[RMDB]
RNA sequence: GGGAACGACUCGAGUAGAGUCGAAAAUUCAGAGCCUUCGGGCUCUGAACCGUUUUCCUUGUUCCCAUAAUUGGUAACUCGGUAAUAAAAGGAAAGUUGCCGCAACUUGUUCGUUCGCGAACAAGAAGAAUUUUAACAGGUUCGCCUGUUAAAAUUCAAAAGAAACAACAACAACAAC
Reactivity to DMS in 0.01 (KOAc 150mM, MgCl2 10mM, bicine 150mM(pH8.5), 24C), signal-to-noise 1, nucleotides 027 to 126: u000u000c010a020g000a020g000c000c000u010u010c220g010g000g000c030u000c000u010g000a010a030c060c130g000u000u000u000u000c000c050u010u010g020u000u000c000c010c000a170u010a080a080u010u030g020g020u000a030a010c010u010c040g050g020u010a120a150u010a080a140a100a070g000g000a100a100a060g010u000u000g000c020c020g030c300a060a100c000u000u000g030u000u000c000g010u000u030c170g030c010g010a000a000c010a000a000g000a060a100
Reactivity to 2A3 in 0.01 (KOAc 150mM, MgCl2 10mM, bicine 150mM(pH8.5), 24C), signal-to-noise 1, nucleotides 027 to 126: u010u020c000a010g010a010g010c010c000u020u030c190g170g010g000c070u010c000u000g000a010a010c010c020g030u030u110u000u000c000c000u060u050g000u040u010c060c000c000a010u170a090a090u160u150g000g020u020a000a000c020u020c120g000g060u070a150a100u110a150a300a050a020g080g000a120a060a010g010u000u020g010c000c030g000c030a010a070c000u000u020g010u030u010c000g000u000u030c190g020c010g110a010a010c000a010a000g000a000a000